Overview
This 177-nucleotide RNA was probed chemically with DMS and 2A3. For DMS the reverse transcriptase was MarathonRT. The RNA was probed in 150 mM KOAc, 10 mM MgCl2 and 150 mM bicine (pH 8.5) at 24 C.

RNA sequence: GGGAACGACUCGAGUAGAGUCGAAAAGCUCGGUGACACCGCGUCUGCCUGGGUCCGAAAGAUUUCUUGUCGCAAAUCUACAAGACAUUGGUUAACGUGUGGGCCGCUUGAGCGGCCGCUCGGCGGGUCAACGUAUGGUCUUCGGGCCGUGCGUUGAAAAAGAAACAACAACAACAAC
Reactivity to DMS in 0.01 (KOAc 150mM, MgCl2 10mM, bicine 150mM(pH8.5), 24C), signal-to-noise 1, nucleotides 027 to 126: g010c000u000c000g000g010u020g020a110c130a060c050c030g020c040g030u020c030u020g000c030c050u000g010g000g020u010c010c000g020a130a130a030g010a020u000u000u020c000u030u010g020u060c300g010c300a060a050a050u000c010u020a050c100a070a090g000a020c030a070u010u020g000g000u010u010a060a090c030g000u010g000u210g030g000g040c020c010g060c040u030u060g000a030g030c000g050g060c170c100g020c030u000c040g000g000c010g010g000g020
Reactivity to 2A3 in 0.01 (KOAc 150mM, MgCl2 10mM, bicine 150mM(pH8.5), 24C), signal-to-noise 5, nucleotides 027 to 126: g000c000u000c010g040g030u060g040a040c020a010c180c000g020c010g040u020c070u040g020c000c000u050g030g010g060u020c020c000g060a130a130a010g010a020u020u060u000c030u080u170g140u160c090g010c160a050a050a130u030c020u030a040c060a170a000g020a010c030a070u040u100g060g000u090u140a070a030c020g010u040g020u190g080g080g000c000c010g030c010u200u300g050a050g080c000g010g020c020c010g010c020u020c030g040g000c010g000g020g020